[RMDB]
RNA sequence: GGGAACGACUCGAGUAGAGUCGAAAAAUUCACGGCCUAUCGAUAAUGUUAAACAAGGAGUUCGAUUUUCCGUACCACCAGUUCUUGCUAGCAAACGUCCAGCAGACGAAGAUGAUCCUCCUCGAGAGCAGCAUGAUUUAUUCGUAAAUCAUGCUGCAAAAGAAACAACAACAACAAC
Reactivity to DMS in 0.01 (KOAc 150mM, MgCl2 10mM, bicine 150mM(pH8.5), 24C), signal-to-noise 3, nucleotides 027 to 126: a150u000u000c040a090c050g000g020c060c040u010a060u000c050g020a050u000a100a130u000g050u010u010a060a100a150c100a090a110g000g040a080g020u010u010c070g010a080u000u000u020u000c040c010g010u000a130c070c040a050c040c020a080g020u010u000c040u010u000g010c010u010a040g010c080a050a100a110c150g000u000c020c040a030g010c080a090g000a060c070g000a070a090g000a060u010g010a070u000c030c010u000c050c010u000c040g000a100g020a130
Reactivity to 2A3 in 0.01 (KOAc 150mM, MgCl2 10mM, bicine 150mM(pH8.5), 24C), signal-to-noise 2, nucleotides 027 to 126: a020u120u080c050a020c030g020g020c010c000u020a020u040c050g040a020u090a170a080u230g120u260u170a130a140a070c070a120a110g100g030a100g010u070u040c020g030a060u080u040u000u000c000c020g000u030a040c010c030a020c010c020a030g030u060u020c030u000u060g000c020u030a080g010c000a090a050a150c070g020u050c060c010a010g000c040a030g000a010c010g010a040a000g020a050u090g000a010u000c000c010u000c000c010u010c040g160a160g000a020